[RMDB]
RNA sequence: GGGAACGACUCGAGUAGAGUCGAAAAGGUAUCUUCCACUUGAGCACCCCAACGAGGAAUGACCAAAACGGUAAUAUAUACCGAGAGGUAGAAGCCUAUGAUGGCUUGAUAGUUCUUGACCAAGACAAGUUCACGGAUCGUUACACCAUCAAGAGUGCUUGCCACGAGAAUUCGUUCUCGUGGCAAGAAAAGAAACAACAACAACAAC
Reactivity to 2A3 in 0.01 (KOAc 150mM, MgCl2 10mM, bicine 150mM(pH8.5), 24C), signal-to-noise 1, nucleotides 027 to 156: g040g000u060a110u090c010u010u060c050c040a080c040u100u050g000a050g060c080a210c000c000c000c020a040a000c090g010a030g020g030a110a090u090g050a030c000c010a000a170a000a060c000g000g000u050a090a060u070a140u090a000u030a150c000c000g000a020g050a000g020g000u030a040g120a050a030g000c000c000u130a200u200g130a090u050g000g000c000u040u050g050a000u060a020g060u080u000c000u040u040g060a060c070c000a040a000g030a050c000a000a150g020u150u000c010a010c060g060g000a110u040c070g000u000u000a010c020a040c030c020a050u080c120a030a020g030a030g130u050g050

The record gives the reactivity of an RNA of 207 nucleotides to 2A3. The RNA was probed in 150 mM KOAc, 10 mM MgCl2 and 150 mM bicine (pH 8.5) at 24 C. It was measured as part of the RMDB library OK3TST. As a SHAPE reagent, 2A3 marks flexible, mostly unpaired nucleotides at the ribose 2'-OH. For 2A3 the reverse transcriptase was SuperScript II with manganese.